[RMDB]
Chemical mapping of a 177-nucleotide RNA with DMS and 2A3. 2A3 adducts were read by reverse transcription with SuperScript II with manganese. For 2A3, 8,553 sequencing reads were counted. The DMS profile rests on 4,366 reads.
RNA sequence: GGGAACGACUCGAGUAGAGUCGAAAAGAUAUGGAUCUAGUAGGGAGGGCAUCGGAAACGAUGCACCAUCGAUCUACGGAUCCUAAGUCAAAACAAAGUUGAAGUAGUUCGCUACUUCAACUUUGAACAUCCACAUCAUGUUCGCAUGAUGUGGAUGAAAAGAAACAACAACAACAAC
Reactivity to DMS in 0.01 (KOAc 150mM, MgCl2 10mM, bicine 150mM(pH8.5), 24C), signal-to-noise 3, nucleotides 027 to 126: g000a070u000a300u010g010g000a000u000c000u020a100g040u000a000g000g000g000a060g020g010g000c010a010u000c000g010g000a090a070a250c000g030a010u000g000c000a040c010c000a240u000c190g000a100u000c000u000a020c000g000g000a020u000c000c000u000a030a050g010u000c040a110a070a120a150c000a000a000a010g000u000u000g000a020a010g020u000a000g010u000u010c240g010c000u010a010c000u000u000c000a000a000c000u000u000u010g000a080a150
Reactivity to 2A3 in 0.01 (KOAc 150mM, MgCl2 10mM, bicine 150mM(pH8.5), 24C), signal-to-noise 3, nucleotides 027 to 126: g030a010u070a030u160g010g000a000u010c020u080a240g000u000a000g010g040g000a020g020g000g000c000a000u000c010g010g030a070a040a020c010g020a010u010g040c060a190c030c000a080u290c020g020a020u000c000u000a010c010g000g000a000u000c000c000u000a090a040g010u020c040a000a000a060a190c020a000a000a020g000u010u010g000a010a000g000u000a010g020u070u100c300g010c240u000a000c000u000u010c000a010a000c000u000u020u010g000a010a000